Background
Chemical mapping of a 170-nucleotide RNA with DMS and 2A3. Values cover nucleotides 27 to 129. The data come from the RNA Mapping Database (RMDB), library 15KLIB. Conditions: 150 mM KOAc, 10 mM MgCl2 and 150 mM bicine (pH 8.5), 24 C.
[RMDB]
RNA sequence: GGGAACGACUCGAGUAGAGUCGAAAACGGGCGCUCCCCUCGAUCCACCUUCGAGGGGGUUCACACCUCCAACCUGCGGGCCGGCUACUCUUCUUUUCCUUUCCUCGUCAUCCUGGGUCAACCUCUUAUACCUGCGCGUUCGCGCGCAGGAAAAGAAACAACAACAACAAC
Reactivity to DMS in 0.01 (KOAc 150mM, MgCl2 10mM, bicine 150mM(pH8.5), 24C), signal-to-noise 2, nucleotides 027 to 129: c220g000g030g030c000g040c150u040c000c020c120c020u000c060g030a070u090c030c160a190c040c090u010u000c000g000a010g030g000g040g020g010u020u010c210a120c130a180c040c030u010c000c000a090a080c090c050u010g000c030g020g000g070c040c050g000g000c010u020a030c090u010c010u000u040c030u010u000u070u000c030c030u000u000u000c000c000u000c030g010u000c040a090u030c060c060u020g000g000g060u000c050a120a110c160c000u010c020u080u000a130u200a130
Reactivity to 2A3 in 0.01 (KOAc 150mM, MgCl2 10mM, bicine 150mM(pH8.5), 24C), signal-to-noise 2, nucleotides 027 to 129: c000g020g030g000c070g000c030u040c000c000c000c010u020c010g000a050u070c090c090a070c070c040u050u000c020g000a000g000g000g010g010g010u020u030c000a030c020a010c030c000u000c040c000a070a160c030c030u040g030c030g020g000g000c010c030g000g000c010u000a030c000u000c000u110u000c030u010u050u000u050c000c000u040u060u000c020c000u030c010g050u020c020a090u000c030c000u040g000g020g000u040c000a040a050c010c000u020c000u060u050a110u080a140